An RNA of 207 nucleotides, treated with DMS and 2A3 and read out base by base.
Source: RMDB library M2RFPK, as collected in RNAgym.
2A3 is a SHAPE reagent: it acylates the 2'-hydroxyl of flexible nucleotides of all four kinds.
Reactivities are rounded to 0.1 and cut off at 0 and 3.
For DMS the reverse transcriptase was MarathonRT.
The DMS profile rests on 2,668 reads.
The RNA was probed in 150 mM KOAc, 10 mM MgCl2 and 150 mM bicine (pH 8.5) at 24 C.
RNA sequence: GGGAACGACUCGAGUAGAGUCGAAAAUGCAAGUAGUGCUAUUGUUGGAAUCACCGUACCUAUUUAGGUUUACGCUCCAAGAUCGAUGGAUAGCAGCCCUAUCAAUAUCUAGGAGAACUGUGCUAUGAAAACGGUAUUGGCUUCGGCCAAUACCGAACAUAGCCUUCGUGUUCGCACGAAGGCUAUGAAAAGAAACAACAACAACAAC
Reactivity to DMS in 0.01 (KOAc 150mM, MgCl2 10mM, bicine 150mM(pH8.5), 24C), signal-to-noise 2, nucleotides 027 to 156: u000g010c050a070a200g010u000a070g010u030g070c030u000a020u000u060g040u000u020g000g010a130a080u020c010a060c070c010g000u000a060c020c000u000a220u000u010u000a050g010g030u000u000u000a040c020g020c010u000c030c020a100a100g020a060u030c070g040a100u000g010g010a060u000a030g000c040a180g010c110c190c010u000a120u010c010a080a090u000a100u000c010u000a160g010g010a060g020a040a100c040u000g040u000g040c020u000a110u000g000a050a060a080a100c010g050g000u000a000u000u000g010g010c010u000u010c300g100g020c000c010a010a000u000a000c030c000g000a010a040
Reactivity to 2A3 in 0.01 (KOAc 150mM, MgCl2 10mM, bicine 150mM(pH8.5), 24C), signal-to-noise 4, nucleotides 027 to 156: u140g020c020a050a000g050u090a010g050u140g080c030u030a040u140u050g060u020u040g050g080a120a080u130c030a030c070c020g000u020a020c000c020u050a150u250u210u300a020g010g010u060u100u040a020c020g010c010u040c000c020a040a020g000a010u040c170g140a050u070g020g000a000u000a010g010c050a030g030c040c000c000u040a020u010c010a010a050u040a000u300c000u010a080g000g010a020g020a020a020c030u040g030u010g090c050u060a030u220g110a040a060a030a070c010g000g000u000a000u000u010g000g000c000u060u060c220g060g000c000c000a000a000u000a000c000c000g000a010a000